[RMDB]
RNA sequence: GGGAACGACUCGAGUAGAGUCGAAAAGGAGGAUGAGAAAGCUAGCGAUAAAUAAGGCCUCCGGCGCGCGCGUUAUAAGUAUAAGAGAGAUAGGAAAGCGAUCGCUAUUGCGCGCGAGUGGCCGUUCGCGGCCGCAAAAGAAACAACAACAACAAC
Reactivity to 2A3 in 0.01 (KOAc 150mM, MgCl2 10mM, bicine 150mM(pH8.5), 24C), signal-to-noise 1, nucleotides 027 to 135: g060g040a010g160g040a160u300g060a170g250a270a130a010g090c150u300a070g140c080g120a100u230a210a300a100u290a260a130g180g060c000c000u070c080c000g070g130c090g090c020g010c020g030c030g060u140u170a070u090a300a130g160u110a130u120a270a080g110a000g000a010g050a010u130a220g300g210a300a270a020g150c100g060a050u100c010g000c040u030a070u060u090g020c000g020c000g010c020g000a020g020u010g000g000c010c010g000u000u000c100g000c000g010g000c000c040g000c020a010

This 155-nucleotide RNA was probed chemically with 2A3. Conditions: 150 mM KOAc, 10 mM MgCl2 and 150 mM bicine (pH 8.5), 24 C.